[RMDB]
RNA sequence: GGGAACGACUCGAGUAGAGUCGAAAAGAUAUGGAGGGCCAUGUAAGAGCAACAGCUCGGAAACGAGACAUGCUUUGAGUGGAACUACCCUCCUAAGUCAAAAGAGCACAUCUUCGGAUGUGCUCAAGGAGAAGCUAUUCUUCGGAAUAGCUUCUCCAAAAGAAACAACAACAACAAC
Reactivity to DMS in 0.01 (KOAc 150mM, MgCl2 10mM, bicine 150mM(pH8.5), 24C), signal-to-noise 2, nucleotides 027 to 126: g000a040u030a300u000g020g010a000g000g000g000c000c010a030u000g000u000a240a020g010a010g000c020a040a060c240a110g000c010u010c000g000g000a090a070a200c010g000a010g000a080c050a110u000g000c010u000u000u000g000a290g030u000g010g000a020a010c040u020a300c000c000c010u000c000c010u000a000a020g010u000c050a060a030a100a130g000a000g000c000a000c000a000u000c000u000u000c160g040g000a010u000g000u000g000c000u000c010a000a050

Chemical mapping of a 177-nucleotide RNA with DMS. Source: RMDB library TTRDEL, as collected in RNAgym. The RNA was probed in 150 mM KOAc, 10 mM MgCl2 and 150 mM bicine (pH 8.5) at 24 C. The DMS profile rests on 1,210 reads.